[RMDB]
RNA sequence: GGGAACGACUCGAGUAGAGUCGAAAAUGUUUGCCCUUCGGGGCAAACAAUAGAAGCGUCACGAGCAAUCGGCAAGCUCGGAAAAGGACGCAAUUGCCGAAAAUACCCUAUGUUUCGACAUAGGGAAGCUAACGGUAGUAUUCGUACUACCGUUAGCAAAAGAAACAACAACAACAAC
Reactivity to 2A3 in 0.01 (KOAc 150mM, MgCl2 10mM, bicine 150mM(pH8.5), 24C), signal-to-noise 4, nucleotides 027 to 126: u030g000u000u000u000g010c010c000c000u010u020c210g050g000g000g000c000a000a000a000c000a000a000u190a040g160a160a020g000c000g010u030c020a040c230g010a020g000c010a020a190u040c010g010g000c020a030a010g010c000u000c000g000g020a130a250a020a030g260g010a010c010g000c040a010a110u180u120g000c000c000g040a050a030a000a020u190a060c000c000c000u000a000u000g020u010u080u060c190g050a010c010a000u000a000g000g000g010a010a000
Reactivity to DMS in 0.01 (KOAc 150mM, MgCl2 10mM, bicine 150mM(pH8.5), 24C), signal-to-noise 2, nucleotides 027 to 126: u000g030u000u000u000g000c000c000c000u010u000c190g040g000g000g000c000a010a010a000c000a040a040u000a120g010a120a110g030c020g000u000c020a180c020g000a010g000c010a030a010u000c020g000g070c030a200a140g000c000u010c000g000g000a040a060a160a220g030g010a010c010g020c000a090a010u000u000g030c000c000g000a100a100a090a100u010a130c000c000c020u010a010u000g020u000u010u000c230g030a000c000a000u000a010g000g000g000a030a010